The data come from the RNA Mapping Database (RMDB), library 15KREP.
Structure probing data (2A3 and DMS) for a 177-nucleotide construct.
For DMS the reverse transcriptase was MarathonRT.
2A3 adducts were read by reverse transcription with SuperScript II with manganese.
[RMDB]
RNA sequence: GGGAACGACUCGAGUAGAGUCGAAAACUAGCUAAGAAUAUCCUGCAUGUCGUAGGCCCAGAUGCCCGCGCUAAACAGGAUGUUUCUCUCCUUAGUAAGUGCUAUAAGGCUAUGAAUGCAUAUCCUCGUGUACACUACUGUUCGCAGUAGUGUACACAAAAGAAACAACAACAACAAC
Reactivity to 2A3 in 0.01 (KOAc 150mM, MgCl2 10mM, bicine 150mM(pH8.5), 24C), signal-to-noise 2, nucleotides 027 to 126: c010u020a000g000c000u040a110a000g000a040a010u000a010u020c000c000u010g030c020a030u080g090u170c000g000u000a010g000g000c020c030c070a080g030a150u170g000c000c010c000g020c000g000c010u020a050a060a020c000a000g000g000a000u000g000u000u070u000c050u030c010u030c000c010u040u010a020g030u090a190a090g040u030g040c010u030a050u020a250a050g030g010c020u050a060u140g080a190a070u180g060c030a030u040a070u080c010c000u050c040
Reactivity to DMS in 0.01 (KOAc 150mM, MgCl2 10mM, bicine 150mM(pH8.5), 24C), signal-to-noise 2, nucleotides 027 to 126: c070u000a040g020c010u000a080a070g010a070a040u000a030u000c020c000u000g010c090a300u000g000u010c000g080u000a020g000g020c000c030c230a130g030a180u020g000c000c000c030g030c010g020c000u000a010a140a070c010a030g010g010a010u000g000u000u000u000c030u000c100u000c040c000u000u000a040g010u000a150a060g010u000g020c020u000a130u010a140a080g020g000c030u000a060u000g000a100a130u020g000c030a010u000a080u000c030c020u000c300